[RMDB]
RNA sequence: GGGAACGACUCGAGUAGAGUCGAAAAAGCCGCUCAAGUGCGCGCCUAAGACCUUCUGGGUGAACGAGGGCAAGCACGCCAAGUUCCGCUGCUACGUGAUGGGCAAGCCCGAGCCCGAGAUCGAAUGUAUAAGCCCUAGAUUCGUCUAGGGCUUAUAAAAAGAAACAACAACAACAAC
Reactivity to DMS in 0.01 (KOAc 150mM, MgCl2 10mM, bicine 150mM(pH8.5), 24C), signal-to-noise 6, nucleotides 027 to 126: a120g020c040c060g010c020u010c070a100a130g010u000g000c020g020c300g010c000c010u010a050a230g000a080c030c010u000u010c150u020g020g010g010u000g000a100a110c100g010a240g010g000g000c010a070a270g010c030a040c060g020c050c080a090a100g000u010u000c030c070g010c060u000g010c050u000a050c100g000u000g000a080u010g000g000g020c020a030a300g010c000c010c020g010a080g000c000c010c010g010a100g010a080u010c040g000a110a130u010g020
Structure probing data (DMS) for a 177-nucleotide construct. The reactions ran in a buffer of 150 mM KOAc, 10 mM MgCl2 and 150 mM bicine (pH 8.5), at 24 C. It was measured as part of the RMDB library OK2TRN. The DMS profile rests on 5,108 reads. DMS adducts were read by reverse transcription with MarathonRT. Values cover nucleotides 27 to 126.